[RMDB]
RNA sequence: GGGAACGACUCGAGUAGAGUCGAAAAGUUAAGAGAGCCGCAAGCGCAGGGAAGGCCUCCCCGCACGGGUGGGGGAAAGCGGCCGGUGCAGCGCGGGGACAGGCACUCGGGCUGGCACUGGCUGCUAGAAAACUAAUUAGUUCGCUAAUUAGUUUUCAAAAGAAACAACAACAACAAC
Reactivity to DMS in 0.01 (KOAc 150mM, MgCl2 10mM, bicine 150mM(pH8.5), 24C), signal-to-noise 2, nucleotides 027 to 126: g000u000u000a080a140g010a140g010a120g020c020c020g010c070a120a120g000c080g020c040a070g000g000g010a060a090g020g000c080c030u000c010c030c010c030g030c100a090c170g010g000g020u000g010g000g010g010g010a060a080a040g010c020g020g000c000c000g000g020u000g000c000a030g000c000g010c000g030g000g000g000a130c110a050g030g020c120a150c000u000c010g000g010g030c000u000g020g010c000a020c010u000g000g000c000u000g000c010u000a050